[RMDB]
RNA sequence: GGGAACGACUCGAGUAGAGUCGAAAAUACCAGAUUCGAAAGAUCCGGAAGGUAGAGGAUAUAUUCUUAAUUCGUUAAGUCAAGGUUUAACAGGUUCACAAUAUUAUUUUUCCAUGUUAGUCGCUAGAUCACAGUCUACUGACAUUGUAUGUGAAACCCCGUAACUUACUUUCGAGUAAGUUACGGGAAAAGAAACAACAACAACAAC
Reactivity to DMS in 0.01 (KOAc 150mM, MgCl2 10mM, bicine 150mM(pH8.5), 24C), signal-to-noise 1, nucleotides 027 to 156: u000a100c000c040a090g010a120u010u010c030g000a220a180a250g010a030u000c010c000g010g010a120a070g020g010u010a090g030a070g000g010a070u000a080u000a050u000u010c020u000u020a010a040u000u020c040g000u010u000a060a000g050u020c040a100a150g060g010u050u010u050a040a050c000a070g000g010u010u000c000a020c040a050a060u000a080u000u010a170u010u000u000u000u000c000c020a100u000g030u020u000a040g030u010c250g000c070u000a090g020a070u000c150a080c140a140g000u000c010u010a090c030u000g010a090c010a130u000u020g020u020a040u000g010u010g090a040a040a180c190
Reactivity to 2A3 in 0.01 (KOAc 150mM, MgCl2 10mM, bicine 150mM(pH8.5), 24C), signal-to-noise 2, nucleotides 027 to 156: u080a000c030c020a020g010a070u070u090c040g050a040a040a040g010a020u000c050c050g010g070a010a010g010g060u070a010g020a030g020g030a000u020a010u030a070u110u080c010u030u090a110a070u140u160c060g040u030u150a030a020g010u000c030a000a030g080g030u000u030u040a050a020c020a030g060g010u040u090c020a030c030a050a050u100a020u300u020a110u050u140u000u130u000c020c000a030u050g000u020u000a020g050u040c010g020c040u050a020g000a270u070c020a030c020a110g000u090c010u030a020c000u020g010a010c000a010u030u080g040u060a180u080g040u020g050a080a050a040c000

Source information
The record gives the reactivity of an RNA of 207 nucleotides to DMS and 2A3. DMS adducts were read by reverse transcription with MarathonRT. For 2A3, 628 sequencing reads were counted.